[RMDB]
RNA sequence: GGGAACGACUCGAGUAGAGUCGAAAAGAUAUGGAUCCCGGCCGGGGCUGACCCACCGAUGAAAUCGGAAACGAUGGAGGUGCAGCAAGAAUGGGAUCCUAAGUCAAAACGUCGCUUCGGCGACGAACUUUUGUAGGAAGUUCGCUUCCUACAAAAGAAAAGAAACAACAACAACAAC
Reactivity to 2A3 in 0.01 (KOAc 150mM, MgCl2 10mM, bicine 150mM(pH8.5), 24C), signal-to-noise 3, nucleotides 027 to 126: g010a010u090a030u090g000g000a000u010c020c020c000g010g040c020c020g100g000g180g010c020u020g050a200c000c000c040a120c060c060g070a160u280g190a300a300a140u020c000g010g000a050a050a000c020g010a040u130g020g050a060g070g030u240g070c000a000g000c140a200a010g000a000a000u060g000g000g000a000u000c000c000u010a010a010g020u000c030a010a020a110a170c020g010u020c000g000c020u050u110c240g110g030c020g010a010c000g000a000a020
Reactivity to DMS in 0.01 (KOAc 150mM, MgCl2 10mM, bicine 150mM(pH8.5), 24C), signal-to-noise 3, nucleotides 027 to 126: g000a010u000a250u000g000g010a030u010c000c000c010g000g000c300c030g020g000g010g000c010u000g020a120c120c080c020a030c030c010g010a150u010g000a110a120a110u000c010g020g000a070a060a110c010g000a050u000g000g010a090g020g030u000g000c010a010g010c030a090a050g000a130a300u000g000g010g000a000u000c000c000u000a000a080g000u010c040a070a070a070a120c010g030u000c010g000c010u000u010c200g040g000c000g000a010c000g000a030a060
Structure probing data (2A3 and DMS) for a 177-nucleotide construct. Conditions: 150 mM KOAc, 10 mM MgCl2 and 150 mM bicine (pH 8.5), 24 C. For DMS the reverse transcriptase was MarathonRT. Source: RMDB library TTRDEL, as collected in RNAgym.